RNA sequence: GGGAACGACUCGAGUAGAGUCGAAAAGGCUGAUGCCGGAGCCGAUACCGGAAUACGAGACCUGAUGUGCGGUCGAAUGCACUGAAGUACGAAAGUACGAAGAGGUCACACCGAGGACCGAGACUCGAUAUGCUCGAUAGAUGGAGCUUUACAUCAACGAGCAUUACGAUUUCGAUCGUAAUGCUCGAAAAGAAACAACAACAACAAC
Reactivity to 2A3 in 0.01 (KOAc 150mM, MgCl2 10mM, bicine 150mM(pH8.5), 24C), signal-to-noise 3, nucleotides 027 to 156: g010g000c000u060g050a060u110g030c020c010g040g010a020g000c040c080g090a040u120a100c000c000g000g030a060a030u150a150c110g000a010g040a170c010c000u070g050a070u110g010u010g000c000g000g000u040c070g080a070a090u130g000c010a000c010u040g050a120a010g020u000a000c010g030a090a010a000g010u020a010c010g030a060a020g100a020g040g020u040c020a010c010a000c070c020g030a050g020g040a080c020c050g040a050g010a070c020u020c020g050a060u070a050u180g020c000u010c020g040a060u050a100g030a010u050g040g040a010g050c000u030u110u030a050c050a040u060c030a010a070
Reactivity to DMS in 0.01 (KOAc 150mM, MgCl2 10mM, bicine 150mM(pH8.5), 24C), signal-to-noise 1, nucleotides 027 to 156: g020g040c000u000g050a140u010g010c060c030g000g010a050g000c030c060g010a170u000a110c030c000g030g010a050a080u010a000c030g020a170g020a120c050c010u000g010a050u000g030u000g010c000g000g060u000c090g010a040a180u000g000c010a040c020u010g000a190a240g030u010a060c000g010a100a130a290g080u000a010c010g010a090a140g010a280g030g010u000c000a080c040a230c120c000g010a110g010g000a110c000c080g010a120g000a060c040u020c000g020a140u000a030u000g010c030u000c010g060a080u010a060g000a150u000g000g000a070g010c050u000u000u000a060c060a140u010c020a050a140